[RMDB]
RNA sequence: GGGAACGACUCGAGUAGAGUCGAAAACAGUGGGAUAGUCAAGGGGAGUGCCCGCGGCCCCAAGGCGAAACUUUAGCAGGAUCGCUUCCCGGAAAUCCCUGCCAGGGGAGAGUCGGGCGGCUAAAUCAAAUCCUGGCAUAAGCAUGUAGACGCCUUCGAUAAUCACAUGGUUCGCCAUGUGAUUAUCAAAAGAAACAACAACAACAAC
Reactivity to 2A3 in 0.01 (KOAc 150mM, MgCl2 10mM, bicine 150mM(pH8.5), 24C), signal-to-noise 2, nucleotides 027 to 156: c030a010g060u090g020g000g050a080u160a210g070u140c040a050a090g020g020g020g010a030g050u040g060c010c000c000g000c020g050g030c000c010c020c010a010a010g030g000c000g020a060a020a000c010u020u070u110a020g040c000a000g000g050a030u050c010g010c000u010u010c000c010c000g010g010a110a120a010u010c000c010c010u070g100c110c090a050g000g030g030g010a040g010a000g110u060c020g000g000g000c010g010g010c010u100a070a040a070u160c070a010a090a100u020c010c010u030g070g000c010a010u060a040a000g010c050a050u110g060u130a060g010a190c030g040c010c040u050u060c100
Chemical mapping of a 207-nucleotide RNA with 2A3. It was measured as part of the RMDB library RSTRND. The reactions ran in a buffer of 150 mM KOAc, 10 mM MgCl2 and 150 mM bicine (pH 8.5), at 24 C. For 2A3, 1,086 sequencing reads were counted.